RNA sequence: GGGAACGACUCGAGUAGAGUCGAAAAGAGCUCUGACAACCAAGGAUUAUAAUUUGGUUAUUGGGAGACAGUGCUAUUAAGGCGACAGGUCUGAAUAAGCUAUCGCUCCUAUGGUACAGUAUGCCACGCUCUGCCUGAAAUUCGUUUCAGGCAGAGCAAAAGAAACAACAACAACAAC
Reactivity to 2A3 in 0.01 (KOAc 150mM, MgCl2 10mM, bicine 150mM(pH8.5), 24C), signal-to-noise 2, nucleotides 027 to 126: g080a000g030c020u000c000u050g030a030c060a020a010c010c000a000a020g030g030a030u080u230a100u290a270a150u020u060u050g000g010u060u040a060u060u160g160g000g010a010g000a000c010a000g020u030g030c000u010a000u060u070a120a020g000g000c010g010a050c090a080g080g040u000c000u000g030a060a070u150a140a010g000c030u000a000u060c030g020c030u000c010c010u050a050u010g020g000u000a030c000a000g030u110a060u100g040c020c000a010c060
Reactivity to DMS in 0.01 (KOAc 150mM, MgCl2 10mM, bicine 150mM(pH8.5), 24C), signal-to-noise 2, nucleotides 027 to 126: g000a070g010c040u010c010u000g000a050c090a040a080c000c010a000a030g010g020a150u020u000a110u000a090a140u000u000u000g010g000u020u000a070u010u010g020g020g000a080g010a050c050a090g000u000g020c010u010a060u000u010a050a030g000g010c000g030a020c070a050g000g000u000c000u020g010a150a090u010a060a060g010c020u000a060u000c010g010c030u010c030c110u010a010u000g000g010u010a020c050a150g000u000a210u010g010c000c010a090c180

The record gives the reactivity of an RNA of 177 nucleotides to 2A3 and DMS.
As a SHAPE reagent, 2A3 marks flexible, mostly unpaired nucleotides at the ribose 2'-OH.
Values cover nucleotides 27 to 126.
DMS adducts were read by reverse transcription with MarathonRT.
The reactions ran in a buffer of 150 mM KOAc, 10 mM MgCl2 and 150 mM bicine (pH 8.5), at 24 C.